Structure probing data (DMS and 2A3) for a 177-nucleotide construct. Reactivities are given for positions 27 through 126. The RNA was probed in 150 mM KOAc, 10 mM MgCl2 and 150 mM bicine (pH 8.5) at 24 C. High 2A3 reactivity points to a flexible backbone, as in loops and unpaired stretches. DMS adducts were read by reverse transcription with MarathonRT. The 2A3 profile rests on 3,579 reads.

[RMDB]
RNA sequence: GGGAACGACUCGAGUAGAGUCGAAAAGAUAUGGAUGCCCGUGGCGUCAACAGCUAAUGUCGGAAACGACAUUAGACAUGACGCACGGCAUCCUAAGUCAAAACGUCUGUUGUUCGCAACAGACGAAUCGUCAAUGUAGCUUCGGCUACAUUGACGAAAAAGAAACAACAACAACAAC
Reactivity to DMS in 0.01 (KOAc 150mM, MgCl2 10mM, bicine 150mM(pH8.5), 24C), signal-to-noise 2, nucleotides 027 to 126: g000a050u000a300u000g010g000a010u000g010c170c040c080g040u010g040g020c000g010u000c000a010a110c300a160g000c010u000a000a000u000g000u010c000g110g010a130a070a250c000g010a040c000a000u000u000a010g000a090c110a250u020g010a000c020g020c000a030c000g010g030c000a000u010c020c000u000a000a090g020u000c000a060a020a080a130c010g000u000c000u000g000u010u000g010u010u010c230g080c000a030a000c000a010g000a000c000g000a020a030
Reactivity to 2A3 in 0.01 (KOAc 150mM, MgCl2 10mM, bicine 150mM(pH8.5), 24C), signal-to-noise 2, nucleotides 027 to 126: g030a000u060a060u150g020g000a010u010g020c010c160c100g070u070g290g180c000g000u010c040a070a060c030a200g010c010u000a000a000u000g010u000c020g000g020a090a040a060c020g000a000c010a000u000u000a000g000a010c030a110u060g010a010c000g020c000a000c000g000g000c000a010u010c000c000u020a010a010g050u020c050a020a010a110a110c010g000u000c010u010g040u020u010g020u070u110c300g000c110a000a000c000a020g000a020c000g000a010a060